[RMDB]
The record gives the reactivity of an RNA of 177 nucleotides to 2A3 and DMS. For 2A3 the reverse transcriptase was SuperScript II with manganese. Reactivities are given for positions 27 through 126. The reactions ran in a buffer of 150 mM KOAc, 10 mM MgCl2 and 150 mM bicine (pH 8.5), at 24 C.
RNA sequence: GGGAACGACUCGAGUAGAGUCGAAAAAGGAAUAAUAUGGUCCUAAAUACUGAUAAGGCAAGAUGAUCAUAGAUAUCCGGCCUCCUCCAACAUCCAUAAAGACCAAGUGGUACUGAUAACUGGUUGACUCGUAGUGUAGAUUCGUCUACACUACGAGAAAAGAAACAACAACAACAAC
Reactivity to 2A3 in 0.01 (KOAc 150mM, MgCl2 10mM, bicine 150mM(pH8.5), 24C), signal-to-noise 3, nucleotides 027 to 126: a000g050g000a040a000u070a050a010u030a020u050g020g010u000c010c000u020a080a110a020u210a060c040u060g080a170u090a300a050g080g050c070a030a020g030a150u110g010a000u020c010a000u010a040g050a030u090a050u140c010c000g020g010c000c000u000c020c010u010c000c000a030a020c010a060u070c030c000a040u060a110a120a000g020a020c020c010a140a080g080u080g040g050u090a120c060u050g080a090u050a140a040c030u010g020g000u050u050g050a060
Reactivity to DMS in 0.01 (KOAc 150mM, MgCl2 10mM, bicine 150mM(pH8.5), 24C), signal-to-noise 5, nucleotides 027 to 126: a100g010g010a050a050u010a190a140u000a020u010g000g000u000c000c090u000a090a130a130u010a100c040u000g010a090u020a110a130g000g000c070a060a050g000a100u000g000a030u010c010a060u000a020g000a140u010a080u000c010c030g000g020c080c020u000c030c000u000c010c040a040a140c100a070u000c050c060a040u010a060a110a090g000a070c020c030a060a070g000u000g000g020u010a090c110u000g010a080u010a090a060c140u010g000g000u000u010g000a210